[RMDB]
RNA sequence: GGGAACGACUCGAGUAGAGUCGAAAAUCAUCGAAACUGUAAACAAAUUCACUAACAAAUAAUCCCUUUGUUUUAUUGUCCUUUGAGUAUAAGCACUAAAUUGUUUAAUCCUUUUCAGGAGGAAAUGGCAUGUUGUUGAUUUCGAUCAACAACAUGCAAAAGAAACAACAACAACAAC
Reactivity to 2A3 in 0.01 (KOAc 150mM, MgCl2 10mM, bicine 150mM(pH8.5), 24C), signal-to-noise 1, nucleotides 027 to 126: u040c000a000u130c000g100a070a000a020c060u110g030u090a030a010a020c010a000a100a030u100u190c220a020c010u100a080a000c040a020a150a060u080a050a030u090c030c000c000u000u000u000g190u150u000u000u000a100u000u170g050u000c000c040u020u140u020g050a000g030u130a080u030a090a000g060c040a010c000u090a070a020a020u000u010g050u000u000u000a050a140u060c000c000u030u000u050u090c240a060g010g010a000g060g000a090a070a010u090g180
Reactivity to DMS in 0.01 (KOAc 150mM, MgCl2 10mM, bicine 150mM(pH8.5), 24C), signal-to-noise 1, nucleotides 027 to 126: u000c060a040u000c010g010a010a030a060c100u010g020u040a070a120a150c100a120a080a080u020u000c040a130c020u000a020a020c060a060a110a030u010a100a110u000c010c010c010u000u000u000g000u000u000u020u000a070u000u000g000u000c040c060u000u000u000g000a090g020u000a080u100a050a010g010c110a020c150u000a020a040a180u010u010g010u000u000u000a080a140u000c030c010u000u020u000u030c260a070g030g000a010g000g010a030a060a240u030g030
Structure probing data (2A3 and DMS) for a 177-nucleotide construct. Conditions: 150 mM KOAc, 10 mM MgCl2 and 150 mM bicine (pH 8.5), 24 C. The data come from the RNA Mapping Database (RMDB), libraries RFM100 and RFMREP.